[RMDB]
RNA sequence: GGGAACGACUCGAGUAGAGUCGAAAAGAUAUGGAUCAUGAGGGAGCUGGGCAUUUCGGAAACGAAAUGCCCAGCUUUGAUCUCAUGAGUCCUAAGUCAAACCGAUAUUACUUCGGUAAUAUCGGAAUCUAUUGAUCUAGUUCGCUAGAUCAAUAGAAAAAGAAACAACAACAACAAC
Reactivity to DMS in 0.01 (KOAc 150mM, MgCl2 10mM, bicine 150mM(pH8.5), 24C), signal-to-noise 3, nucleotides 027 to 126: g000a000u000a070u010g000g000a120u000c000a000u000g010a010g000g000g010a010g060c000u000g020g010g010c000a010u000u000u000c000g020g000a020a020a060c010g020a010a000a010u000g010c000c000c000a000g010c000u000u000u010g000a010u010c010u000c000a010u000g000a040g010u000c000c010u000a010a100g000u000c010a090a110a230c010c000g000a010u000a010u000u000a000c000u000u020c180g020g010u000a000a000u000a000u000c000g010g000a050a020